[RMDB]
The record gives the reactivity of an RNA of 177 nucleotides to DMS and 2A3.

RNA sequence: GGGAACGACUCGAGUAGAGUCGAAAAGGGAUGGAGCAAAAGCGCGGCCGUGGCCGUCCGCGUAAGGCGCACGCCAUGACGAACGCUGAGCGUCAGGCUGCAUAUCGAGCUCGCCGCCGGGCUCAGCCGGUAGGCUCUUCUUCGGAAGAGCCUACCGAAAAGAAACAACAACAACAAC
Reactivity to DMS in 0.01 (KOAc 150mM, MgCl2 10mM, bicine 150mM(pH8.5), 24C), signal-to-noise 2, nucleotides 027 to 126: g000g020g000a040u000g020g000a080g020c040a040a080a150a120g000c010g020c000g010g010c100c050g020u010g000g000c170c050g010u000c070c030g040c040g010u020a130a100g010g000c080g010c100a020c220g020c000c010a090u000g000a040c030g000a090a150c100g030c020u020g000a090g010c000g020u010c030a070g000g020c010u000g010c020a060u010a100u000c080g000a100g000c060u000c050g030c060c070g020c040c020g020g000g000c000u000c010a060g010c020
Reactivity to 2A3 in 0.01 (KOAc 150mM, MgCl2 10mM, bicine 150mM(pH8.5), 24C), signal-to-noise 1, nucleotides 027 to 126: g110g010g010a130u140g070g020a070g020c050a070a030a100a070g020c070g000c020g000g000c000c000g090u070g090g000c070c020g010u030c010c030g000c020g060u120a070a100g120g000c020g000c040a030c100g010c020c000a120u050g040a020c040g040a080a010c000g000c070u080g030a020g020c020g080u080c030a010g020g000c010u040g000c030a030u100a030u280c040g040a060g080c030u020c050g060c020c010g030c040c000g010g010g040c010u010c010a000g060c020
The RNA was probed in 150 mM KOAc, 10 mM MgCl2 and 150 mM bicine (pH 8.5) at 24 C. The DMS profile rests on 1,516 reads. Source: RMDB library OK2TRN, as collected in RNAgym. 2A3 adducts were read by reverse transcription with SuperScript II with manganese.